An RNA of 177 nucleotides, treated with 2A3 and DMS and read out base by base. The reactions ran in a buffer of 150 mM KOAc, 10 mM MgCl2 and 150 mM bicine (pH 8.5), at 24 C. DMS adducts were read by reverse transcription with MarathonRT. The 2A3 profile rests on 875 reads. It was measured as part of the RMDB library OK2TST.
RNA sequence: GGGAACGACUCGAGUAGAGUCGAAAAGAUUCGGUCCUCGAGAUCACGGAUUUCUUCUUCAGAGAAGGGAUCAUGCUCAGGGAGGAGGGGCGGACUUCCGAGGCUACACGCACCUAUUAUGCCACCGCAUUCGGAGAGACUUCGGUCUCUCCGAAUGAAAAGAAACAACAACAACAAC
Reactivity to 2A3 in 0.01 (KOAc 150mM, MgCl2 10mM, bicine 150mM(pH8.5), 24C), signal-to-noise 1, nucleotides 027 to 126: g080a030u080u050c010g040g190u050c030c010u010c010g040a050g000a080u090c080a030c130g090g000a030u040u020u000c020u000u030c000u070u200c070a160g070a010g000a300a000g030g010g010a010u000c010a040u120g010c000u030c070a020g090g000g000a070g000g010a030g040g050g000g030c100g010g020a070c030u000u020c000c050g020a060g000g000c000u000a020c030a030c070g000c020a030c000c020u040a080u270u050a100u090g090c020c010a030c090c000g020
Reactivity to DMS in 0.01 (KOAc 150mM, MgCl2 10mM, bicine 150mM(pH8.5), 24C), signal-to-noise 1, nucleotides 027 to 126: g000a070u000u000c040g010g000u000c100c010u020c030g000a120g010a100u000c040a110c190g010g000a000u000u000u010c010u000u000c000u000u000c300a200g000a040g010a000a020g000g000g000a010u000c010a070u010g000c120u000c020a130g010g000g000a060g020g000a040g010g000g010g040c070g020g010a140c040u000u000c050c020g000a100g020g000c030u000a070c100a090c080g000c040a090c020c030u010a060u020u010a090u010g010c050c040a110c100c040g000